[RMDB]
RNA sequence: GGGAACGACUCGAGUAGAGUCGAAAAGCCGUAAACGUGUGGCAGCAGCGGUGAAGAACAGCAGUGGGAUAGUAGUAAUCACCCCUGCGGCGGCUAAUAGAACAUUCAGCGACCAGGCAUUGGCACCCAUCCGUCGUAUGUUCGCAUACGACGGAUGAAAAGAAACAACAACAACAAC
Reactivity to DMS in 0.01 (KOAc 150mM, MgCl2 10mM, bicine 150mM(pH8.5), 24C), signal-to-noise 1, nucleotides 027 to 126: g010c020c010g010u030a090a130a140c170g000u000g030u010g000g020c030a130g060c070a070g000c120g000g010u000g020a120a070g000a080a000c080a120g000c000a010g020u000g020g010g020a140u000a060g040u000a100g020u000a090a040u040c040a120c040c000c010c000u000g010c030g040g020c060g000g000c010u040a120a120u000a130g000a040a080c070a060u000u010c060a100g010c040g000a150c030c040a090g000g000c030a060u010u010g000g010c050a210c080c020
Reactivity to 2A3 in 0.01 (KOAc 150mM, MgCl2 10mM, bicine 150mM(pH8.5), 24C), signal-to-noise 1, nucleotides 027 to 126: g040c010c000g060u070a070a040a130c070g070u090g000u050g150g000c000a030g000c010a020g000c060g040g030u010g050a070a040g160a130a020c050a030g120c000a040g020u150g030g100g000a050u050a130g140u020a010g060u050a050a080u070c010a120c000c010c040c000u000g000c000g040g000c000g000g020c000u040a050a050u060a080g040a000a000c020a050u050u110c030a010g000c030g040a020c020c000a010g000g050c020a040u090u040g070g000c060a060c030c020